Structure probing data (DMS and 2A3) for a 177-nucleotide construct.
Values cover nucleotides 27 to 126.
High 2A3 reactivity points to a flexible backbone, as in loops and unpaired stretches.
2A3 adducts were read by reverse transcription with SuperScript II with manganese.

RNA sequence: GGGAACGACUCGAGUAGAGUCGAAAACGGUAAGGUGAGGAAAGUCCGGGCUCCACGGAAAUACGGUGCCGGAUAACGUCCGGCGGGGGCGACCCCAGGGAAAGUGCCACAGAGAGCAAACCGCCAUGUGCGUAAUAAGGUUCGCCUUAUUACGCACAAAAGAAACAACAACAACAAC
Reactivity to DMS in 0.01 (KOAc 150mM, MgCl2 10mM, bicine 150mM(pH8.5), 24C), signal-to-noise 2, nucleotides 027 to 126: c070g000g000u080a010a040g010g000u010g000a070g000g000a080a120a120g000u000c020c000g000g000g000c050u000c050c040a190c080g000g000a090a030a160u060a100c100g000g010u000g010c020c030g000g000a000u010a060a040c290g030u000c000c000g030g000c050g000g000g020g070g000c120g000a160c050c040c000c050a040g010g030g020a040a060a050g010u010g020c020c010a050c130a090g000a110g030a090g020c030a030a060a120c050c020g000c050c050a190u030
Reactivity to 2A3 in 0.01 (KOAc 150mM, MgCl2 10mM, bicine 150mM(pH8.5), 24C), signal-to-noise 3, nucleotides 027 to 126: c030g020g050u100a060a090g010g000u040g040a030g030g060a150a050a010g040u040c000c000g000g000g020c000u030c020c010a060c030g030g060a080a090a030u170a090c070g060g010u070g000c000c000g000g000a020u030a070a030c050g100u000c000c000g000g010c030g030g000g010g000g010c030g050a120c000c010c000c000a020g020g000g020a030a080a050g040u080g030c020c010a020c030a060g090a010g000a010g050c030a070a040a010c040c000g010c020c000a040u060